[RMDB]
RNA sequence: GGGAACGACUCGAGUAGAGUCGAAAAUUCUGGAGCACAGAGAGAUAGAGAUGUGGGCAGCAGCUCAAAAGGCAGAAUUGUUCCGAGGCUUCAGAAAAUAACAAAGAAAAUGAACCUCCCAAUGGUAAAUUGGACUUUAGUUCGCUAAAGUCCAAUUAAAAGAAACAACAACAACAAC
Reactivity to DMS in 0.01 (KOAc 150mM, MgCl2 10mM, bicine 150mM(pH8.5), 24C), signal-to-noise 2, nucleotides 027 to 126: u000u000c010u000g010g000a050g030c010a040c080a090g010a190g000a110g000a090u010a060g010a110g000a040u010g030u000g000g010g030c060a100g030c060a050g000c010u000c040a050a030a200a170g040g000c040a050g010a180a080u000u010g000u010u000c000c010g010a180g010g010c060u000u000c020a010g010a020a080a080a170u010a060a080c120a030a100a070g000a050a030a060a090u000g010a120a110c160c020u000c030c010c020a100a050u010g010g010u000a010